[RMDB]
This 177-nucleotide RNA was probed chemically with DMS and 2A3.
RNA sequence: GGGAACGACUCGAGUAGAGUCGAAAAGAUAUGGACGGUAUCACACGAGCGACGAAGUUAGUCGGAAACGACUAACAGAGCUCUAUGUGAGUACCGUCCUAAGUCAAAAGUUAGGUUCGCCUAACAACGUACUCCAAUCCUUCGGGAUUGGAGUACGAAAAGAAACAACAACAACAAC
Reactivity to DMS in 0.01 (KOAc 150mM, MgCl2 10mM, bicine 150mM(pH8.5), 24C), signal-to-noise 2, nucleotides 027 to 126: g010a010u020a300u000g010g030a010c000g000g010u010a070u000c010a010c000a060c300g000a040g010c000g020a250c300g000a120a110g030u020u000a000g000u000c010g010g010a100a120a250c010g040a010c010u000a000a020c000a040g000a140g020c000u000c000u010a100u000g010u010g010a080g020u000a000c000c000g000u000c000c040u000a010a090g020u000c030a110a090a140a090g010u000u000a010g000g010u000u000c270g050c000c000u010a010a010c010a130a160
Reactivity to 2A3 in 0.01 (KOAc 150mM, MgCl2 10mM, bicine 150mM(pH8.5), 24C), signal-to-noise 1, nucleotides 027 to 126: g100a050u130a110u130g000g010a000c010g040g010u000a020u030c000a000c020a000c020g000a000g070c040g300a300c040g000a190a000g000u000u000a010g010u000c010g000g000a040a060a020c020g000a010c000u000a000a010c020a000g000a000g000c030u040c020u030a130u130g010u000g010a060g060u040a010c000c000g000u010c000c000u000a040a000g000u010c020a000a040a070a060g000u010u010a020g020g040u010u030c300g120c070c010u000a010a000c020a010a020
Overview:
The RNA was probed in 150 mM KOAc, 10 mM MgCl2 and 150 mM bicine (pH 8.5) at 24 C. 2A3 adducts were read by reverse transcription with SuperScript II with manganese. Source: RMDB library TTRDES, as collected in RNAgym. Reactivities are given for positions 27 through 126.